[RMDB]
RNA sequence: GGGAACGACUCGAGUAGAGUCGAAAAGAUAUGGAUAGGCGUUGUAUCGUGCCGUGGAGAUCCAUGGUCGGAAACGACCAGUGGAUCGAUGAAACGGAACUACACGAUACAACGCCUAUCCUAAGUCGAAUGUAUACUGCUUCGGCAGUAUACAUUCAAAAGAAACAACAACAACAAC
Reactivity to DMS in 0.01 (KOAc 150mM, MgCl2 10mM, bicine 150mM(pH8.5), 24C), signal-to-noise 3, nucleotides 027 to 126: g000a070u010a300u010g010g010a010u000a010g000g010c000g030u000u000g010u000a000u000c000g020u000g000c010c000g010u000g000g010a050g000a010u000c000c010a070u010g000g010u010c000g010g000a070a060a090c000g040a020c000c000a010g030u010g050g000a000u000c020g010a090u030g010a050a210a020c000g000g010a070a020c060u020a300c010a010c010g000a010u000a000c000a010a000c000g000c000c000u000a000u000c000c000u000a020a100g000u000c130

Background: This 177-nucleotide RNA was probed chemically with DMS.